Description
This 177-nucleotide RNA was probed chemically with DMS and 2A3. The data come from the RNA Mapping Database (RMDB), library OK2TST. The reactions ran in a buffer of 150 mM KOAc, 10 mM MgCl2 and 150 mM bicine (pH 8.5), at 24 C.
RNA sequence: GGGAACGACUCGAGUAGAGUCGAAAAACCAUGAUCAUCCCGACUCUGGUGCCCAGUUCUCCCUGGGCGAUCACCGUUCGCUGGAGGAGGUGAUCUCGUGUCUCAUCGAUCAGGGCUACAUCCCUUCGACUCUUCGCUAUUUCGAUAGCGAAGAGUCAAAAGAAACAACAACAACAAC
Reactivity to DMS in 0.01 (KOAc 150mM, MgCl2 10mM, bicine 150mM(pH8.5), 24C), signal-to-noise 2, nucleotides 027 to 126: a080c010c010a070u010g000a080u020c030a090u020c070c050c080g020a070c040u000c010u000g020g000u000g040c010c000c010a010g000u000u010c120u000c170c190c020u010g000g010g010c040g000a020u000c020a040c020c040g000u000u000c040g000c130u010g020g000a120g020g030a200g010g000u010g000a010u000c000u020c050g020u000g000u000c060u000c070a070u000c160g040a050u010c040a020g020g000g000c060u010a040c300a090u000c000c010c010u010u010c110
Reactivity to 2A3 in 0.01 (KOAc 150mM, MgCl2 10mM, bicine 150mM(pH8.5), 24C), signal-to-noise 2, nucleotides 027 to 126: a000c030c010a060u070g020a020u010c000a000u020c000c020c030g020a020c010u030c060u150g120g070u140g030c020c000c000a010g000u270u010c070u090c090c020c000u000g010g010g000c010g010a020u030c010a010c000c010g150u090u050c050g020c220u300g160g060a180g020g030a020g000g040u010g020a010u010c100u070c060g040u040g040u000c010u000c060a110u110c050g010a010u010c010a030g000g040g000c010u070a050c020a150u080c000c000c000u020u080c050